Chemical mapping of a 177-nucleotide RNA with 2A3 and DMS. It was measured as part of the RMDB library OK2TRN. The DMS profile rests on 2,828 reads.
[RMDB]
RNA sequence: GGGAACGACUCGAGUAGAGUCGAAAAGGCUAUUAUUCAAAUGACUUCAGGCAGGAAAGGCAAAAGAGGGUUGAAAAAGCAGAAAGGAGUUUGAAUAUCAGGCAACAAACAAUAAUCUGGGUAACCCGCAAGGGAUACUAUUCGUAGUAUCCCUUGCAAAAGAAACAACAACAACAAC
Reactivity to 2A3 in 0.01 (KOAc 150mM, MgCl2 10mM, bicine 150mM(pH8.5), 24C), signal-to-noise 2, nucleotides 027 to 126: g040g000c000u030a040u140u040a060u020u210c040a050a030a070u080g010a060c010u040u040c060a010g110g000c000a000g000g090a100a090a000g050g000c020a040a000a110a000g090a070g020g040g000u020u000g040a080a010a040a030a030g020c030a010g100a050a040a000g020g020a050g000u030u000u030g010a040a010u030a040u100c070a020g070g000c020a060a030c030a050a180a000c010a000a080u160a100a070u130c080u070g070g000g050u040a040a080c000c000c010
Reactivity to DMS in 0.01 (KOAc 150mM, MgCl2 10mM, bicine 150mM(pH8.5), 24C), signal-to-noise 4, nucleotides 027 to 126: g020g000c020u000a060u000u000a060u000u010c050a050a060a060u010g020a200c050u000u000c080a100g010g010c030a070g000g020a050a090a090g000g010c070a040a050a080a100g010a100g020g000g000u010u000g000a040a080a080a100a080g010c080a040g000a050a050a040g010g000a180g010u000u000u000g010a040a060u010a090u000c120a080g000g020c050a030a120c070a030a080a070c080a060a110u010a050a080u010c110u010g000g000g010u000a090a080c040c030c100